[RMDB]
RNA sequence: GGGAACGACUCGAGUAGAGUCGAAAAGAUAUGGAAGUAAGUUUCGAUAAGCUGCGUAGGUCGGAAACGACCUGAUCAGCUUUUGACGAAAGAUGUUCCUAAGUCGCGCCGUGUGUUCGCACACGAAUACCAAUUGGUGGUUCGCCACCAAUUGGUAAAAAGAAACAACAACAACAAC
Reactivity to DMS in 0.01 (KOAc 150mM, MgCl2 10mM, bicine 150mM(pH8.5), 24C), signal-to-noise 3, nucleotides 027 to 126: g010a050u020a300u000g010g000a040a040g000u010a070a100g000u000u000u000c000g010a080u000a030a010g000c000u000g010c250g020u010a000g000g000u000c000g000g000a110a100a210c010g000a010c000c000u010g020a020u000c000a010g010c000u000u000u000u000g020a170c120g000a010a010a020g010a120u010g000u000u000c000c000u010a070a140g000u000c040g000c130g020c170c010g010u000g000u000g000u000u010c150g020c010a000c000a010c010g010a120a110
Reactivity to 2A3 in 0.01 (KOAc 150mM, MgCl2 10mM, bicine 150mM(pH8.5), 24C), signal-to-noise 2, nucleotides 027 to 126: g010a040u040a050u180g000g030a010a040g130u280a050a140g060u060u020u010c010g000a020u020a120a040g000c000u000g000c030g140u190a020g010g020u000c030g030g090a020a040a050c000g020a010c000c020u000g000a020u010c000a020g030c000u000u010u020u040g030a030c010g010a010a010a000g150a080u230g210u110u030c000c000u030a130a040g040u050c030g000c030g000c170c100g010u020g000u010g040u030u170c280g020c200a000c000a010c000g040a040a050
Record summary
Chemical mapping of a 177-nucleotide RNA with DMS and 2A3. For 2A3, 1,768 sequencing reads were counted. Conditions: 150 mM KOAc, 10 mM MgCl2 and 150 mM bicine (pH 8.5), 24 C. The data come from the RNA Mapping Database (RMDB), library TTRDEL. DMS adducts were read by reverse transcription with MarathonRT. For DMS, 2,680 sequencing reads were counted.